The data come from the RNA Mapping Database (RMDB), library VIROID. An RNA of 177 nucleotides, treated with 2A3 and DMS and read out base by base. Reactivities are given for positions 27 through 126. For DMS, 4,952 sequencing reads were counted. For 2A3 the reverse transcriptase was SuperScript II with manganese.
[RMDB]
RNA sequence: GGGAACGACUCGAGUAGAGUCGAAAAGGGACCAGUGGAGCCAUGGGAUGCCCUUUCCCAUGUUCGAAUCCAUCCCUUCCCCCCGAGUGUCGCCCAGGAAUGGCGGGACCCCACUCAACUGGGGUCCGAUCUCAUUAGUCUUCGGACUAAUGAGAUCAAAAGAAACAACAACAACAAC
Reactivity to 2A3 in 0.01 (KOAc 150mM, MgCl2 10mM, bicine 150mM(pH8.5), 24C), signal-to-noise 2, nucleotides 027 to 126: g010g000g020a040c070c140a080g050u040g030g020a020g030c000c000a010u000g000g010g010a010u100g120c000c100c000u040u050u020c000c000c000a010u010g030u050u120c080g100a110a070u000c020c010a050u100c020c000c000u020u040c020c000c000c000c000c020g050a120g030u110g030u060c010g010c010c010c000a020g000g160a190a100u090g040g000c010g010g000g000a000c010c000c010c000a010c020u130c040a070a210c050u030g010g000g000g000u000c000c000
Reactivity to DMS in 0.01 (KOAc 150mM, MgCl2 10mM, bicine 150mM(pH8.5), 24C), signal-to-noise 5, nucleotides 027 to 126: g010g000g000a300c120c090a210g020u000g000g020a070g020c180c010a010u010g000g000g000a030u000g000c090c060c090u010u000u010c000c000c010a020u010g010u000u000c090g020a180a110u010c020c020a110u000c020c000c000u000u000c010c010c000c000c000c010g010a110g010u000g000u010c040g000c030c010c060a150g000g010a120a070u000g010g020c040g000g000g000a010c010c000c000c000a030c070u000c300a090a090c180u000g010g010g000g010u000c000c010